RNA sequence: GGGAACGACUCGAGUAGAGUCGAAAACAUCCUUUUCUUACCUUGUGGCCGGCAUGGCCCCAGCCUCCUCGCUGGCGCCGGCUGGGCAACGAUCCGAGGGAACUAUUCCUCUCGAGAAUCGGCAAAUAGUGUAUGUACAGUUCGCUGUACAUACACUAAAAGAAACAACAACAACAAC
Reactivity to 2A3 in 0.01 (KOAc 150mM, MgCl2 10mM, bicine 150mM(pH8.5), 24C), signal-to-noise 2, nucleotides 027 to 126: c030a010u090c030c030u060u090u030u000c030u060u150a090c040c020u030u070g100u050g240g080c000c000g030g040c060a140u110g030g060c030c000c000c000a010g010c010c050u100c010c030u110c070g010c030u010g000g000c000g000c020c000g090g000c000u000g000g000g070c030a080a030c000g030a010u010c000c000g000a010g020g010g010a030a040c030u080a150u260u000c020c020u100c000u000c000g120a170g020a150a040u020c020g030g000c040a000a020a100u040
Reactivity to DMS in 0.01 (KOAc 150mM, MgCl2 10mM, bicine 150mM(pH8.5), 24C), signal-to-noise 1, nucleotides 027 to 126: c180a180u020c010c000u010u000u000u000c050u000u000a220c220c080u000u000g040u000g010g020c010c020g020g000c010a060u000g060g040c060c140c010c000a000g000c000c060u000c110c060u000c210g000c020u010g000g030c300g040c000c040g000g010c010u000g070g000g000c010a060a120c010g040a010u010c040c040g020a000g050g000g010a060a110c300u000a230u000u000c060c000u000c010u020c000g040a090g030a090a060u000c000g010g010c080a040a040a080u000
This 177-nucleotide RNA was probed chemically with 2A3 and DMS. The RNA was probed in 150 mM KOAc, 10 mM MgCl2 and 150 mM bicine (pH 8.5) at 24 C. For DMS the reverse transcriptase was MarathonRT. For DMS, 708 sequencing reads were counted.